Source: RMDB library M2PK50, as collected in RNAgym. An RNA of 177 nucleotides, treated with DMS and 2A3 and read out base by base. Values are in units of 0.01, from 0 to 300, in steps of 10. For 2A3, 4,424 sequencing reads were counted. As a SHAPE reagent, 2A3 marks flexible, mostly unpaired nucleotides at the ribose 2'-OH. DMS adducts were read by reverse transcription with MarathonRT. For 2A3 the reverse transcriptase was SuperScript II with manganese. The RNA was probed in 150 mM KOAc, 10 mM MgCl2 and 150 mM bicine (pH 8.5) at 24 C.
RNA sequence: GGGAACGACUCGAGUAGAGUCGAAAAGUGGAUAGUUUCGACUAUCCACACAACUGAUGAUCUUACAGUGGAGGAUGAAGAUGAUGGCCAUCGGAUCCUCAAAUAGCACAGAGUUCGCUCUGUGCAAGUAUAGACAGUGCUUCGGCACUGUCUAUACAAAAGAAACAACAACAACAAC
Reactivity to DMS in 0.01 (KOAc 150mM, MgCl2 10mM, bicine 150mM(pH8.5), 24C), signal-to-noise 2, nucleotides 027 to 126: g020u000g020g000a000u000a000g000u020u000u020c170g030a020c000u010a000u000c010c000a010c000a040c180a070a070c050u000g010a080u000g000a130u000c060u000u000a120c070a030g020u000g000g000a010g020g020a020u000g000a170a140g010a010u000g010a230u000g020g010c200c000a010u000c000g010g000a070u000c010c000u000c030a030a050a070u000a110g010c000a000c000a030g010a000g020u000u030c260g020c010u000c000u000g000u010g000c010a010a000
Reactivity to 2A3 in 0.01 (KOAc 150mM, MgCl2 10mM, bicine 150mM(pH8.5), 24C), signal-to-noise 3, nucleotides 027 to 126: g000u000g000g000a010u000a010g000u030u070u070c160g040a020c000u000a000u000c010c000a000c000a000c000a000a010c020u070g030a090u060g020a070u130c040u070u160a070c050a060g050u130g190g000a010g000g030a060u070g070a070a070g010a000u030g010a050u190g220g110c090c000a000u020c010g030g040a000u000c000c000u000c000a010a020a020u080a000g000c000a010c000a000g010a000g000u040u070c130g060c070u000c000u000g000u000g010c000a010a000